[RMDB]
RNA sequence: GGGAACGACUCGAGUAGAGUCGAAAAACGUACCUAUUCGUAGGUACGUGAUUAAAAGCUAGUCAUAUAAAAGGAAGACUAGCAAUAUAGAAUCCUAUAAUAAUAGCACAUGUUUCGACAUGUGCAAUACCACUUUUUACUUCGGUAAAAAGUGGUAAAAAGAAACAACAACAACAAC
Reactivity to 2A3 in 0.01 (KOAc 150mM, MgCl2 10mM, bicine 150mM(pH8.5), 24C), signal-to-noise 3, nucleotides 027 to 126: a000c010g000u000a000c000c000u010a040u030u050c220g060u020a000g000g000u000a000c000g010u010g010a010u020u150a000a030a040a020g000c000u000a000g010u000c030a080u160a020u070a300a180a060a070g110g050a090a140g000a000c000u000a000g000c000a010a010u040a010u000a010g120a070a050u010c010c030u060a050u070a200a120u130a100a020u050a080g000c000a000c000a010u010g000u000u070u080c190g080a010c000a010u000g010u010g010c000a010a000
Reactivity to DMS in 0.01 (KOAc 150mM, MgCl2 10mM, bicine 150mM(pH8.5), 24C), signal-to-noise 2, nucleotides 027 to 126: a000c000g000u000a000c010c000u000a050u020u060c160g020u000a010g000g000u010a000c000g030u010g000a050u000u010a020a090a120a240g000c000u000a010g010u000c000a130u010a240u000a100a090a210a100g020g010a180a170g000a040c010u000a000g010c000a040a010u000a100u010a060g010a270a150u000c020c010u010a080u020a060a080u010a070a090u000a160g000c000a020c000a000u000g000u010u000u010c270g030a010c010a000u000g020u010g010c000a030a060
Structure probing data (2A3 and DMS) for a 177-nucleotide construct.
For DMS the reverse transcriptase was MarathonRT.
Conditions: 150 mM KOAc, 10 mM MgCl2 and 150 mM bicine (pH 8.5), 24 C.
It was measured as part of the RMDB library M2PK50.
For DMS, 1,782 sequencing reads were counted.